An RNA of 177 nucleotides, treated with DMS and read out base by base. Values cover nucleotides 27 to 126. For DMS, 1,589 sequencing reads were counted.
[RMDB]
RNA sequence: GGGAACGACUCGAGUAGAGUCGAAAAAAAAAGAUAUGGAAGCCAGUGUCCGAGAGAGGUACGAAAUCGUAUUCGGAAACGAAUACGACACGUACCUGGAAUGGACCUGGCUUCCUAAGUCAAAAAACCAUAGGUAUACCUUCGGGUAUACCUAUGGAAAAGAAACAACAACAACAAC
Reactivity to DMS in 0.01 (KOAc 150mM, MgCl2 10mM, bicine 150mM(pH8.5), 24C), signal-to-noise 2, nucleotides 027 to 126: a000a110a050a050a040g000a020u020a300u020g010g000a020a020g000c000c000a020g000u010g030u000c020c000g030a160g040a300g000a030g030g000u010a010c000g000a090a070a180u000c000g000u000a000u000u000c000g030g010a110a070a070c010g000a010a000u000a000c000g010a030c260a110c030g020u000a000c000c010u010g000g010a300a140u010g000g010a010c000c000u000g000g000c020u000u000c000c000u010a010a040g010u000c010a020a080a070a110a000a100